RNA sequence: GGGAACGACUCGAGUAGAGUCGAAAAAUCUACUACCGAUGAUGUAAGUCUUACAAUGUUUGAACCAGUACCAGAUCUUAAUUUGGAGGCCUCCGUAGAACUAGGGGAGGUAAAUAUAGAUCAAACACCGAUAUGUCGUAUUCGUACGACAUAUCGGAAAAGAAACAACAACAACAAC
Reactivity to DMS in 0.01 (KOAc 150mM, MgCl2 10mM, bicine 150mM(pH8.5), 24C), signal-to-noise 1, nucleotides 027 to 126: a070u000c030u010a140c070u010a150c030c060g060a050u000g030a100u010g010u030a080a110g050u010c050u010u000a080c110a130a080u000g020u000u000u000g020a100a160c030c090a050g000u000a130c010c070a060g000a010u000c140u000u000a120a070u000u010u010g010g020a240g000g010c030c010u020c000c010g030u010a030g000a040a080c240u000a080g050g020g010g000a050g000g020u000a020a000a050u000a110u030a040g010a080u000c010a060a050a060c060a100
Reactivity to 2A3 in 0.01 (KOAc 150mM, MgCl2 10mM, bicine 150mM(pH8.5), 24C), signal-to-noise 1, nucleotides 027 to 126: a000u010c000u040a030c000u020a040c020c040g090a120u070g000a000u040g130u160a000a080g060u050c060u080u130a090c040a100a120u050g000u030u030u140g080a080a100c130c050a080g040u070a020c000c010a050g050a070u040c000u060u070a040a070u160u050u040g000g070a120g220g000c000c000u010c000c000g120u040a120g050a300a080c130u140a090g040g010g020g030a000g000g040u000a000a000a000u160a010u020a000g050a010u030c000a000a000a150c040a000